[RMDB]
RNA sequence: GGGAACGACUCGAGUAGAGUCGAAAAGCAAAAGUAUUACGCGAAAUUCUGAGCGUAGCACGUGACAAAGGUAUGAAUAUUGAAUUCAUUGGUCAUAGAACUAAGAGAUUCACAGCCCGAUAUGUGACACGCAUACUAUCUUCGGAUAGUAUGCGUGAAAAGAAACAACAACAACAAC
Reactivity to 2A3 in 0.01 (KOAc 150mM, MgCl2 10mM, bicine 150mM(pH8.5), 24C), signal-to-noise 5, nucleotides 027 to 126: g160c090a050a060a060a000g090u100a080u170u020a010c030g030c000g120a100a070a090u250u070c110u130g040a030g030c010g000u000a000g020c020a010c050g020u050g020a010c030a060a170a070g180g010u060a080u050g030a070a010u100a090u150u190g100a100a060u020u020c010a020u010u080g020g000u000c000a030u040a150g070a080a000c020u080a100a040g040a010g020a090u020u050c030a010c020a040g050c000c050c000g030a060u050a020u270g050u030g020a020
Reactivity to DMS in 0.01 (KOAc 150mM, MgCl2 10mM, bicine 150mM(pH8.5), 24C), signal-to-noise 4, nucleotides 027 to 126: g000c140a050a070a070a120g030u000a040u020u000a010c020g040c020g000a080a080a170u000u010c090u010g010a220g000c010g000u010a000g010c110a070c050g020u010g010a030c070a080a090a110g000g000u020a050u010g000a060a030u010a160u030u050g010a050a050u000u000c030a110u000u030g010g000u000c000a100u020a050g000a100a030c120u020a040a070g000a160g010a090u030u010c040a030c130a060g010c000c000c010g000a070u010a070u010g000u000g020a120